Chemical mapping of a 177-nucleotide RNA with DMS and 2A3. The RNA was probed in 150 mM KOAc, 10 mM MgCl2 and 150 mM bicine (pH 8.5) at 24 C. 2A3 adducts were read by reverse transcription with SuperScript II with manganese.
RNA sequence: GGGAACGACUCGAGUAGAGUCGAAAAGGUGUGUGUACUUACUACAUAACGAAUCAAUCUUUCGCCUUUUACUAAAGAUUGCCGUGUAGGAGGUACUUUAAAUACAAUACCACAAAUUUUUGUCACGCACCGACAAUAGCUUCGGCUAUUGUCGGUGAAAAGAAACAACAACAACAAC
Reactivity to DMS in 0.01 (KOAc 150mM, MgCl2 10mM, bicine 150mM(pH8.5), 24C), signal-to-noise 1, nucleotides 027 to 126: g000g000u040g000u070g010u000g000u040a050c000u000u000a160c000u040a000c000a050u050a300a070c170g010a100a210u000c020a020a000u010c010u000u000u010c060g000c170c230u050u000u060u000a160c040u000a000a000a010g000a020u000u000g000c120c150g040u000g000u000a000g000g010a030g010g010u000a000c000u000u000u000a120a130a120u020a050c040a100a010u020a100c030c010a070c080a030a090a090u000u000u000u060u000g050u010c170a080c120g010
Reactivity to 2A3 in 0.01 (KOAc 150mM, MgCl2 10mM, bicine 150mM(pH8.5), 24C), signal-to-noise 3, nucleotides 027 to 126: g080g010u020g030u000g000u000g010u000a020c000u030u000a040c010u000a000c020a040u140a190a060c040g090a070a050u200c000a000a010u000c000u010u010u030c110g070c040c020u150u300u110u300a040c060u080a010a010a010g000a010u000u010g000c070c040g000u010g010u010a010g000g010a010g000g000u000a000c010u000u050u000a000a010a000u150a040c070a080a050u010a100c010c000a010c060a140a050a090u240u190u040u050u090g180u070c060a040c140g020
Overview: Source: RMDB libraries RFM100 and RFMREP, as collected in RNAgym.